[RMDB]
RNA sequence: GGGAACGACUCGAGUAGAGUCGAAAACGCUGGGACGUGGUACGAGAGCAUCGAUCUCCUGAAGCGCGCACGGGAGGGAGCUCUUGUACGUAACAUCGUCCUGUGCUGAAGCGCGCACGGCAACCGAAAGGUGCGGAGUAGUAGGUUCGCCUACUAAAUAAACGGUAAGGUUCGCCUUACCGUUUAUAAAAGAAACAACAACAACAAC
Reactivity to 2A3 in 0.01 (KOAc 150mM, MgCl2 10mM, bicine 150mM(pH8.5), 24C), signal-to-noise 3, nucleotides 027 to 156: c010g000c050u070g000g000g000a000c010g030u100g040g000u060a000c000g010a000g000a010g010c000a010u300c010g010a000u000c010u010c000c020u050g040a230a070g000c000g000c000g000c000a010c020g000g000g000a000g000g000g020a000g000c000u000c010u000u020g000u020a010c020g000u040a020a010c040a170u250c020g000u010c000c000u000g000u000g020c010u060g000a160a060g020c000g000c000g000c000a000c000g000g050c000a010a010c010c020g080a050a040a060g020g000u020g020c010g010g070a110g030u050a000g010u000a010g030g100u050u070c200g110c010c000u000a000c000u010a030a150
Reactivity to DMS in 0.01 (KOAc 150mM, MgCl2 10mM, bicine 150mM(pH8.5), 24C), signal-to-noise 2, nucleotides 027 to 156: c020g020c030u010g000g000g030a050c000g000u000g050g030u000a010c000g010a130g000a040g000c020a250u000c230g020a020u020c000u010c000c000u000g020a030a080g030c000g060c010g010c040a300c050g000g030g010a060g010g030g000a050g010c000u000c000u000u000g010u000a000c030g010u000a080a080c120a070u000c000g000u000c010c000u000g020u030g000c030u000g040a030a050g000c000g010c030g000c000a300c060g000g000c020a030a090c010c010g010a110a070a120g000g030u000g010c000g000g000a170g000u000a050g010u000a000g010g020u000u020c300g050c040c010u000a020c010u010a020a090